Structure probing data (2A3 and DMS) for a 207-nucleotide construct. Conditions: 150 mM KOAc, 10 mM MgCl2 and 150 mM bicine (pH 8.5), 24 C. For 2A3 the reverse transcriptase was SuperScript II with manganese. Values cover nucleotides 27 to 156. The data come from the RNA Mapping Database (RMDB), library OK3TST. Reactivities are rounded to 0.1 and cut off at 0 and 3. The DMS profile rests on 3,203 reads.
RNA sequence: GGGAACGACUCGAGUAGAGUCGAAAAAGCGCAUCUAGAGAGAUUGUACACGUUGAGGCUAGUGUGUCUCUCAACGUGAGUCUCUCUAGAUAUGGAGAGUGAGUGUGUUCAGAAGACACACUAGCACUGAACACAUACCUCACUCUCUAUACACGCAACUAGCCCUUUUAUUCGUAAAAGGGCUAGUAAAAGAAACAACAACAACAAC
Reactivity to 2A3 in 0.01 (KOAc 150mM, MgCl2 10mM, bicine 150mM(pH8.5), 24C), signal-to-noise 2, nucleotides 027 to 156: a000g040c020g020c000a000u010c010u010a000g000a000g000a000g020a020u030u150g170u180a080c020a000c000g000u000u000g000a010g010g000c100u080a040g070u030g030u010g030u090c010u000c000u000c170a000a000c000g000u010g010a020g000u000c000u000c000u000c000u000a000g000a000u000a010u010g000g000a000g000a000g000u010g000a000g010u030g000u000g000u000u000c000a020g020a090a030g030a150c030a010c010a030c110u000a020g040c090a020c090u000g000a000a000c000a000c000a000u080a080c050c000u000c000a000c000u000c000u000c000u000a000u000a000c030a000c010g010c000a020
Reactivity to DMS in 0.01 (KOAc 150mM, MgCl2 10mM, bicine 150mM(pH8.5), 24C), signal-to-noise 2, nucleotides 027 to 156: a080g020c040g050c090a070u000c010u000a040g000a060g010a040g000a060u010u000g020u000a260c010a010c010g000u000u000g020a030g010g050c040u000a090g030u000g000u000g010u000c000u000c010u040c000a010a020c000g080u000g010a110g010u000c000u000c000u000c000u000a010g010a010u000a040u000g000g000a060g000a030g000u000g010a190g050u010g040u000g010u000u000c000a080g020a230a200g000a100c050a060c050a050c020u000a090g030c110a220c010u000g030a040a040c010a000c030a080u000a100c300c040u000c000a050c010u000c010u000c010u010a010u000a050c150a070c000g010c000a160